Structure probing data (2A3 and DMS) for a 177-nucleotide construct. The data come from the RNA Mapping Database (RMDB), library M2PK90. Conditions: 150 mM KOAc, 10 mM MgCl2 and 150 mM bicine (pH 8.5), 24 C. The 2A3 profile rests on 8,194 reads.
RNA sequence: GGGAACGACUCGAGUAGAGUCGAAAAUUAAAUAGCGUAAUCGACAUUGAGAAUGUACGCUAAGUGUGUGUUGUAUGGGCAACGUCCAAUUGAACACACACACAGUUGGACCUAAUCUCGAAAAAAAGAUCUAAAAUAGGUUCGCCUAUUUUAGAUCAAAAGAAACAACAACAACAAC
Reactivity to 2A3 in 0.01 (KOAc 150mM, MgCl2 10mM, bicine 150mM(pH8.5), 24C), signal-to-noise 6, nucleotides 027 to 126: u150u080a010a020a090u060a010g000c010g010u020a050a050u120c080g060a060c100a120u090u190g020a030g010a090a070u170g030u090a000c010g000c000u010a070a070g010u000g000u010g000u000g010u040u040g100u100a100u070g040g000g000c100a270a110c210g020u010c000c010a030a030u060u110g110a090a000c010a010c000a000c000a000c000a000c000a050g120u150u140g060g010a020c010c000u030a070a090u020c020u010c010g080a150a040a000a010a010a000a040
Reactivity to DMS in 0.01 (KOAc 150mM, MgCl2 10mM, bicine 150mM(pH8.5), 24C), signal-to-noise 6, nucleotides 027 to 126: u000u010a060a090a160u000a020g000c010g020u000a040a060u000c130g010a190c140a120u000u020g000a060g020a070a150u010g010u000a030c010g010c000u000a040a110g020u000g010u010g010u000g020u010u000g030u010a070u010g010g010g010c030a090a110c300g010u000c010c000a010a130u000u000g000a070a020c020a010c010a000c010a010c020a030c130a070g010u000u000g000g000a180c030c040u000a070a090u000c020u000c020g010a010a010a060a110a070a070a090